Notes: An RNA of 177 nucleotides, treated with 2A3 and DMS and read out base by base.
RNA sequence: GGGAACGACUCGAGUAGAGUCGAAAAGAUAUGGAUGCGGACUUGCUAGCCGAAGAACUCGGAAACGAGGGAGGCUAGAACUACAAGGAAGCAUCCUAAGUCAAACAUACUGGUUCGCCAGUAUGAAGCCAUUAUCUUACUUCGGUAAGAUAAUGGCAAAAGAAACAACAACAACAAC
Reactivity to 2A3 in 0.01 (KOAc 150mM, MgCl2 10mM, bicine 150mM(pH8.5), 24C), signal-to-noise 3, nucleotides 027 to 126: g040a010u050a020u200g010g000a010u010g010c010g040g100a030c000u000u010g020c000u000a010g010c000c000g280a300a060g020a040a020c010u020c010g030g020a080a050a050c020g010a020g030g000g020a020g010g000c010u000a000g000a020a020c050u200a030c010a000a000g030g010a000a030g010c010a000u010c000c000u000a040a000g020u000c000a010a100a020c000a000u000a000c000u000g000g080u060u090c300g050c080c000a000g000u010a000u020g020a050a000
Reactivity to DMS in 0.01 (KOAc 150mM, MgCl2 10mM, bicine 150mM(pH8.5), 24C), signal-to-noise 3, nucleotides 027 to 126: g020a040u010a300u010g030g010a020u000g030c000g020g010a300c010u000u000g000c000u000a010g020c000c050g000a060a130g000a180a160c000u000c010g000g000a070a040a200c030g020a020g010g000g000a070g030g010c000u010a010g000a030a020c110u040a270c040a000a030g000g000a280a260g000c030a000u000c000c000u000a010a080g010u000c070a110a110a150c010a010u000a000c000u000g000g010u000u010c280g010c020c000a000g000u000a000u000g000a130a090
The DMS profile rests on 2,128 reads.